[RMDB]
Source: RMDB library TTRDES, as collected in RNAgym. This 177-nucleotide RNA was probed chemically with 2A3 and DMS. The reactions ran in a buffer of 150 mM KOAc, 10 mM MgCl2 and 150 mM bicine (pH 8.5), at 24 C. For 2A3, 16,271 sequencing reads were counted. The DMS profile rests on 6,435 reads. DMS adducts were read by reverse transcription with MarathonRT. Reactivities are given for positions 27 through 126.

RNA sequence: GGGAACGACUCGAGUAGAGUCGAAAAGAUAUGGAUGUUGUACGACAUGCCUUCCUGUCGGAAACGACAGAGAGGCAACAGCGUAUUGCAUCCUAAGUCAAAAUCAAUUCGGUUCGCCGAAUUGAAAGAAUACGUAUUGCUUCGGCAAUACGUAUUCAAAAGAAACAACAACAACAAC
Reactivity to 2A3 in 0.01 (KOAc 150mM, MgCl2 10mM, bicine 150mM(pH8.5), 24C), signal-to-noise 4, nucleotides 027 to 126: g000a000u000a010u080g000g000a010u000g010u030u020g020u020a000c020g050a050c130a250u300g010c000c000u030u070c000c000u010g000u000c000g000g030a010a010a020c000g010a010c000a000g020a010g010a010g020g000c010a050a030c140a040g000c000g000u000a000u000u020g030c000a010u000c000c000u010a020a000g000u000c020a040a010a010a300u040c000a010a000u010u010c020g050g050u050u110c300g060c110c010g000a000a010u010u000g020a050a010a010
Reactivity to DMS in 0.01 (KOAc 150mM, MgCl2 10mM, bicine 150mM(pH8.5), 24C), signal-to-noise 4, nucleotides 027 to 126: g000a030u000a050u000g010g000a020u000g010u000u000g000u000a010c000g000a050c150a160u020g010c010c000u000u000c040c000u000g010u000c000g020g000a010a020a050c010g030a020c000a010g000a030g010a000g010g020c010a030a020c250a140g010c020g000u000a010u000u000g000c000a000u000c000c000u010a020a110g010u000c000a130a100a120a170u000c000a000a000u000u000c010g020g010u000u020c300g020c010c000g000a020a000u000u000g010a020a050a160